[RMDB]
RNA sequence: GGGAACGACUCGAGUAGAGUCGAAAAGAUAUGGAAUGGUGUCCUCCAUAGGCAAUGAUGUCGGAAACGAUUGAGCCUAUGAGCCAGGACACCCAUUCCUAAGUCAAAAGUCUCGUUCGCGAGACAACCAUACAUAAGUCUUCGGACUUAUGUAUGGAAAAGAAACAACAACAACAAC
Reactivity to 2A3 in 0.01 (KOAc 150mM, MgCl2 10mM, bicine 150mM(pH8.5), 24C), signal-to-noise 7, nucleotides 027 to 126: g020a020u080a040u170g000g000a010a010u000g000g000u010g000u000c000c010u000c010c000a010u010a000g010g000c010a050a300u220g060a040u130g070u040c010g020g040a080a070a060c020g000a010u020u070g030a010g000c000c000u000a000u010g000a000g010c060c060a000g000g000a000c000a000c000c000c010a000u000u000c000c000u020a100a020g060u020c030a030a050a060a120g010u010c020u000c010g040u110u100c300g000c010g090a000g000a000c000a000a020
Reactivity to DMS in 0.01 (KOAc 150mM, MgCl2 10mM, bicine 150mM(pH8.5), 24C), signal-to-noise 7, nucleotides 027 to 126: g010a030u010a300u000g010g000a030a010u000g000g030u000g010u000c000c000u000c050c000a010u000a000g010g010c000a190a110u020g010a110u000g000u000c000g010g000a110a090a180c010g010a020u000u000g010a100g000c000c000u000a000u000g000a090g010c190c290a020g000g010a010c000a000c120c040c050a010u000u000c000c000u010a040a110g000u010c040a090a090a080a110g000u000c000u000c000g020u000u010c210g010c010g000a000g000a010c010a040a100
Record summary
Structure probing data (2A3 and DMS) for a 177-nucleotide construct. DMS (dimethyl sulfate) methylates the pairing face of unpaired adenines and cytosines. It was measured as part of the RMDB library TTRDEL. The RNA was probed in 150 mM KOAc, 10 mM MgCl2 and 150 mM bicine (pH 8.5) at 24 C. The DMS profile rests on 12,226 reads. The 2A3 profile rests on 37,677 reads. Values cover nucleotides 27 to 126.